[RMDB]
RNA sequence: GGGAACGACUCGAGUAGAGUCGAAAAGCAUACAACUUCGGUUGUAUGCAACGACAGAGUUGACUGACAUAAACAACGUAACAUGUGAGUUACAAUAACACAUUGCAGCAGCUUUCGAGCUGCUGAACUAAUCUUUAGCGUUCGCGCUAAAGAUUAGAAAAGAAACAACAACAACAAC
Reactivity to 2A3 in 0.01 (KOAc 150mM, MgCl2 10mM, bicine 150mM(pH8.5), 24C), signal-to-noise 5, nucleotides 027 to 126: g000c000a000u000a000c000a000a010c030u070u100c200g120g000u000u000g000u000a000u000g000c000a000a010c030g040a020c010a020g030a010g060u020u010g060a190c000u020g040a030c020a120u190a090a100a000c010a010a030c060g060u070a040a030c030a060u130g090u060g190a120g040u050u030a020c030a050a080u150a090a020c070a000c030a120u080u300g040c000a000g000c000a000g000c000u070u040u140c220g070a000g000c000u000g000c000u000g010a000a000
Reactivity to DMS in 0.01 (KOAc 150mM, MgCl2 10mM, bicine 150mM(pH8.5), 24C), signal-to-noise 4, nucleotides 027 to 126: g000c000a010u000a000c010a000a000c000u000u010c240g020g020u000u000g010u000a000u000g000c000a030a040c160g000a200c050a020g000a110g010u000u000g000a140c020u000g000a160c170a070u010a020a030a060c060a030a040c080g000u000a030a060c090a100u010g010u020g010a110g000u000u000a020c100a080a090u000a060a070c100a050c110a030u000u000g000c000a000g010c000a010g010c000u000u000u010c210g010a000g020c000u000g000c000u000g000a020a120
Structure probing data (2A3 and DMS) for a 177-nucleotide construct. 2A3 adducts were read by reverse transcription with SuperScript II with manganese.